[RMDB]
RNA sequence: GGGAACGACUCGAGUAGAGUCGAAAAAGCACGGUUUUUGAGGACGCAUUUUGUCCGUGCGGUAAUGCCCUCCUUUACACAUUCUCGCAUGGUGCGGGAGUGUGGAGAGGAAACAAAAGCUAGUCUCGAUAGGCGGUUAACUUCGGUUAACCGCCAAGAGGCUAACUAGGUUCGCCUAGUUAGCCUCAAAAGAAACAACAACAACAAC
Reactivity to 2A3 in 0.01 (KOAc 150mM, MgCl2 10mM, bicine 150mM(pH8.5), 24C), signal-to-noise 2, nucleotides 027 to 156: a010g000c010a000c000g010g020u020u000u010u000u010g080a100g010g030a020c050g080c170a190u000u000u000u010g000u030c010c000g010u000g000c000g020g030u120a110a050u200g060c010c000c000u050c010c000u010u010u010a000c000a000c000a000u000u000c000u000c010g040c020a110u240g300g070u300g140c010g000g000g000a000g000u010g000u000g000g000a000g000a000g000g010a010a000a000c010a000a000a000a000g080c020u060a020g020u010c010u020c010g070a160u120a130g000g000c010g000g000u010u000a020a000c020u040u050c160g000g000u020u000a000a000c050c000g000c000c000a000a000